[RMDB]
RNA sequence: GGGAACGACUCGAGUAGAGUCGAAAAAUGUCCGACUGGCACGGCGGUAGGCAGGUCCAGCGCGACUGGUCCAACGAUCGCGAAAACUGCUGCUGCCAGGCAUGCGGUGGAACGUAAAAAAGACAUAGUCCACUGGAGGAUUCGUCCUCCAGUGGACAAAAGAAACAACAACAACAAC
Reactivity to DMS in 0.01 (KOAc 150mM, MgCl2 10mM, bicine 150mM(pH8.5), 24C), signal-to-noise 1, nucleotides 027 to 126: a080u000g010u000c000c010g000a040c040u030g000g000c000a070c140g000g010c000g010g000u020a070g030g070c040a050g000g050u000c070c040a090g040c020g000c150g030a160c000u000g010g000u000c030c200a140a240c150g020a140u010c080g000c030g000a030a030a130a030c000u000g000c010u000g000c190u000g010c050c000a020g030g000c170a130u000g000c010g010g000u000g010g030a140a100c090g000u000a010a040a050a130a120a100g000a020c040a040u000a160
Reactivity to 2A3 in 0.01 (KOAc 150mM, MgCl2 10mM, bicine 150mM(pH8.5), 24C), signal-to-noise 1, nucleotides 027 to 126: a030u000g030u000c020c000g010a000c020u040g070g000c010a000c020g000g030c040g030g030u010a050g060g170c040a010g010g010u000c000c000a020g000c230g010c030g180a260c000u010g060g030u000c040c000a010a060c100g070a100u060c050g000c010g010a000a020a110a000c000u010g010c000u030g040c110u000g010c040c000a010g010g000c000a010u200g020c030g070g000u050g070g100a110a040c010g010u130a300a250a090a090a160a000g020a000c030a030u160a030